[RMDB]
RNA sequence: GGGAACGACUCGAGUAGAGUCGAAAAUGAUCGAGAGAUCUAACGAUGUACGCGAGUCAAUAGCACAGACUCGAGCGAAAGCUCGGUCGAAAGACCGCGUACAUCGGUCGGCAAGUGUAGAGUCAAAAAUAGGUGCGAGUUUCGACUCGCACCUAUUAAAAGAAACAACAACAACAAC
Reactivity to DMS in 0.01 (KOAc 150mM, MgCl2 10mM, bicine 150mM(pH8.5), 24C), signal-to-noise 1, nucleotides 027 to 126: u000g010a000u010c000g000a300g000a150g000a000u000c000u000a090a100c000g000a000u000g030u000a010c000g050c000g020a080g010u000c000a040a180u000a150g030c190a080c170a150g000a000c000u030c010g040a010g030c010g010a140a050a250g010c000u000c010g030g010u000c000g040a100a130a180g000a000c000c000g010c040g010u000a000c010a000u000c010g000g010u000c000g000g000c040a040a110g020u000g020u000a090g010a060g000u000c020a020a150a110